[RMDB]
RNA sequence: GGGAACGACUCGAGUAGAGUCGAAAACAUAGCGUUUCACAAUGUGCGCCAUUAACAUUGUUUAUGCAAGCACGUUUCGCAAUGUACGGCGCAGAAACAUUGCCAACACAAAUACGCUUCACGAUGCAAAACAUCGGUGCGUUCGCGCACCGAUGAAGAUAAUGAACAAGUUCGCUUGUUCAUUAUCAAAAGAAACAACAACAACAAC
Reactivity to 2A3 in 0.01 (KOAc 150mM, MgCl2 10mM, bicine 150mM(pH8.5), 24C), signal-to-noise 6, nucleotides 027 to 156: c050a050u150a020g010c010g020u020u120u130c120a060c010a050a030u030g010u020g010c010g020c010c020a100u180u180a060a010c010a010u020u020g060u070u110u090a120u150g070c080a050a100g070c060a040c190g020u040u090u100c040g010c000a010a000u000g000u010a030c070g010g000c020g010c020a000g030a010a060a000c010a010u010u020g050c050c050a130a020c060a050c020a120a140a050u160a030c020g010c010u070u070c060a080c120g110a080u160g070c060a040a060a090a080c000a010u000c000g000g010u000g000c000g000u020u040c180g020c000g000c050a000c000c000g000a000u000g000a000a000
Reactivity to DMS in 0.01 (KOAc 150mM, MgCl2 10mM, bicine 150mM(pH8.5), 24C), signal-to-noise 4, nucleotides 027 to 156: c040a090u000a040g020c050g000u000u000u000c080a060c040a050a090u000g010u000g010c000g030c020c030a120u000u010a100a060c040a040u000u000g020u000u010u000a080u020g030c060a080a150g020c100a140c070g030u010u000u000c150g010c040a010a020u000g020u000a070c100g030g020c060g030c030a050g010a130a110a100c010a020u000u000g000c000c060a070a080c080a090c060a060a080a100u000a040c040g010c010u000u000c000a070c060g010a090u000g000c050a070a060a100a240c020a020u000c000g020g020u000g000c000g000u000u000c210g030c020g020c020a010c000c000g000a000u000g000a030a070